[RMDB]
RNA sequence: GGGAACGACUCGAGUAGAGUCGAAAAGAUAUGGAGCGUGAGUGGACAUGCUCCAGGGUUCGGAAACGAACCCGGAGCAACAGCCACCACGCUCCUAAGUCAAAACAGUGACGUUCGCGUCACUGAACCACUCCAACUUGUUCGCAAGUUGGAGUGGAAAAGAAACAACAACAACAAC
Reactivity to 2A3 in 0.01 (KOAc 150mM, MgCl2 10mM, bicine 150mM(pH8.5), 24C), signal-to-noise 2, nucleotides 027 to 126: g020a000u030a020u100g000g000a000g000c000g010u010g010a300g040u030g040g050a100c220a300u300g040c010u000c020c040a040g000g000g000u020u000c030g030g000a000a000a000c000g000a000a000c010c010c010g000g000a000g030c010a050a270c080a150g010c000c010a040c010c000a010c000g000c020u000c000c000u010a000a000g000u020c010a000a010a020a060c010a030g010u000g040a040c040g050u070u030c300g050c000g090u030c010a010c000u000g010a010a010
Reactivity to DMS in 0.01 (KOAc 150mM, MgCl2 10mM, bicine 150mM(pH8.5), 24C), signal-to-noise 1, nucleotides 027 to 126: g000a020u010a110u000g000g000a030g020c010g050u000g000a210g030u030g000g030a060c140a110u020g010c000u000c000c000a030g030g010g010u000u000c000g000g000a000a030a100c000g010a010a010c000c000c000g000g000a020g030c020a030a030c230a200g030c020c010a000c000c000a000c000g000c010u010c010c000u000a010a040g010u010c000a160a140a070a260c000a030g000u000g010a000c000g010u000u010c300g020c020g000u000c000a020c000u000g010a040a110
Chemical mapping of a 177-nucleotide RNA with 2A3 and DMS. The data come from the RNA Mapping Database (RMDB), library TTRDES. DMS adducts were read by reverse transcription with MarathonRT. The RNA was probed in 150 mM KOAc, 10 mM MgCl2 and 150 mM bicine (pH 8.5) at 24 C. The DMS profile rests on 1,158 reads.